Chemical mapping of a 207-nucleotide RNA with 2A3. Values are in units of 0.01, from 0 to 300, in steps of 10. For 2A3, 1,167 sequencing reads were counted.

[RMDB]
RNA sequence: GGGAACGACUCGAGUAGAGUCGAAAAGCUAUGGAUGCAGUUCAACGACUAAACGGUGAUGGGCUAGCGUAAUGAAUGCGUUCUGCACACUCUUACGCCGGCUUAAGAUAUAGUCUACUCCCACUCCGAAAGGAGGGGUACUAAAAGCUCUUAAGGUCUCAUAGAUGCUCUUCGGAGCAUCUAUGAGAAAAGAAACAACAACAACAAC
Reactivity to 2A3 in 0.01 (KOAc 150mM, MgCl2 10mM, bicine 150mM(pH8.5), 24C), signal-to-noise 3, nucleotides 027 to 156: g060c060u070a100u140g020g040a060u050g010c030a020g010u070u110c090a090a040c040g040a010c000u050a040a060a060c140g120g000u100g040a080u090g040g030g000c030u020a010g000c000g010u010a000a030u110g020a240a300u040g020c020g110u260u150c080u240g030c020a010c000a020c010u000c000u000u040a000c000g000c010c000g010g030c000u020u030a040a000g020a010u080a000u010a120g010u000c050u020a010c070u060c030c020c040a220c000u000c000c000g050a050a000a000g000g000a000g000g000g020g010u000a000c010u050a030a140a090a040g050c010u030c010u090u120a080a070g120g000u010